Chemical mapping of a 177-nucleotide RNA with 2A3 and DMS. For DMS, 3,458 sequencing reads were counted. High DMS reactivity at an A or C suggests that its Watson-Crick edge is free. The reactions ran in a buffer of 150 mM KOAc, 10 mM MgCl2 and 150 mM bicine (pH 8.5), at 24 C.
RNA sequence: GGGAACGACUCGAGUAGAGUCGAAAAGCGGAGAUGUUCGCAUCUCCGCAAAUCCCUGGAUGCAGCGAGUUAAAACGGUUACGUUGGCAAGUAUCCAUCGCAAAAGUAUUAGCUUCGGCUAAUACAAUCCAAUAUCAUCGUUCGCGAUGAUAUUGGAAAAAGAAACAACAACAACAAC
Reactivity to 2A3 in 0.01 (KOAc 150mM, MgCl2 10mM, bicine 150mM(pH8.5), 24C), signal-to-noise 3, nucleotides 027 to 126: g000c000g000g000a010g020a000u010g030u060u110c180g020c080a000u000c010u000c000c000g010c000a000a000a000u010c010c000c000u000g020g000a000u020g010c020a000g010c020g080a240g160u070u150a120a120a040a000c010g050g070u250u220a080c030g030u020u020g020g000c020a050a050g000u030a010u010c010c010a030u110c110g040c110a090a110a050a050g010u000a020u000u000a000g000c000u020u020c250g100g000c000u020a000a010u010a000c010a000a030
Reactivity to DMS in 0.01 (KOAc 150mM, MgCl2 10mM, bicine 150mM(pH8.5), 24C), signal-to-noise 4, nucleotides 027 to 126: g000c000g000g020a010g010a010u010g010u000u010c250g040c000a000u000c000u000c000c000g020c000a000a010a090u000c000c000c000u000g010g010a010u000g030c050a140g010c060g010a130g040u000u010a060a100a020a010c030g010g010u000u000a080c030g000u000u000g010g010c050a090a130g000u000a030u000c030c000a030u010c190g000c150a080a070a130a140g010u000a000u000u000a000g000c000u000u010c200g020g000c000u000a000a000u000a000c000a090a110